[RMDB]
RNA sequence: GGGAACGACUCGAGUAGAGUCGAAAAGAUAUGGAAGAUGAUGCUCAACAGCUCAGGCCUCGGAAACGAGGCUGAGACAUGAGCGCAUCUUCCUAAGUCAAAACGUCCUCGGUUCGCCGAGGACGAACGUAUAGUAUGGCUUCGGCCAUACUAUACGAAAAGAAACAACAACAACAAC
Reactivity to 2A3 in 0.01 (KOAc 150mM, MgCl2 10mM, bicine 150mM(pH8.5), 24C), signal-to-noise 8, nucleotides 027 to 126: g000a000u000a010u050g000g010a000a000g010a000u020g040a100u140g000c000u010c060a300a220c080a300g000c010u010c010a140g300g300c000c000u000c000g000g000a000a000a000c000g010a000g000g020c000u010g000a000g010a000c070a300u300g000a000g000c000g000c000a000u000c000u000u000c000c000u000a000a000g000u000c010a000a010a100a140c030g000u010c000c000u000c000g020g040u100u100c300g040c100c010g000a000g000g000a000c000g010a010a000
Reactivity to DMS in 0.01 (KOAc 150mM, MgCl2 10mM, bicine 150mM(pH8.5), 24C), signal-to-noise 5, nucleotides 027 to 126: g000a010u000a020u010g000g000a030a000g000a020u000g010a040u010g030c000u000c000a170a060c240a170g000c000u000c000a020g020g010c000c000u000c000g010g000a010a010a020c010g010a020g000g010c000u000g000a010g000a010c060a160u010g000a000g010c000g000c000a000u000c000u000u000c000c000u000a000a050g000u000c000a120a070a150a230c030g010u000c000c000u000c000g010g020u000u010c280g010c010c000g000a010g010g000a000c010g010a020a040

Structure probing data (2A3 and DMS) for a 177-nucleotide construct. The reactions ran in a buffer of 150 mM KOAc, 10 mM MgCl2 and 150 mM bicine (pH 8.5), at 24 C. For 2A3, 32,372 sequencing reads were counted. DMS adducts were read by reverse transcription with MarathonRT. 2A3 adducts were read by reverse transcription with SuperScript II with manganese.